[RMDB]
RNA sequence: GGGAACGACUCGAGUAGAGUCGAAAAAAAAAGAUAUGGACUCGCGUGGGAGAUGUGCGGAGAGCUCUCUCGGAAACGAGAGAGCCUCGGAUAGCAUCGAGGAUCACGCCGAGUCCUAAGUCAAAAAUCAUAUGCUAUAGUUCGCUAUAGCAUAUGAAAAAGAAACAACAACAACAAC
Reactivity to DMS in 0.01 (KOAc 150mM, MgCl2 10mM, bicine 150mM(pH8.5), 24C), signal-to-noise 5, nucleotides 027 to 126: a040a070a060a100a110g010a070u010a300u010g000g000a020c010u000c020g010c020g010u000g000g010g000a040g000a010u000g020u000g010c120g000g000a020g000a120g010c000u000c000u000c000u000c000g010g000a130a080a150c020g010a020g010a010g010a010g020c000c000u000c000g010g020a140u000a230g000c010a020u000c010g010a080g030g010a040u010c000a010c000g010c090c060g020a010g000u000c000c000u000a010a040g000u020c040a030a090a080a100a110
Reactivity to 2A3 in 0.01 (KOAc 150mM, MgCl2 10mM, bicine 150mM(pH8.5), 24C), signal-to-noise 1, nucleotides 027 to 126: a000a000a000a000a000g090a070u170a070u160g000g000a010c010u000c000g010c010g000u000g010g010g020a030g000a000u010g030u080g070c200g110g030a020g000a040g070c000u040c000u000c000u010c000g010g000a090a070a000c020g010a020g010a000g000a010g000c000c000u010c000g030g010a130u160a130g010c000a000u020c010g000a250g000g040a000u010c010a010c000g030c070c010g020a000g000u040c000c000u000a000a000g030u010c030a040a060a030a000a170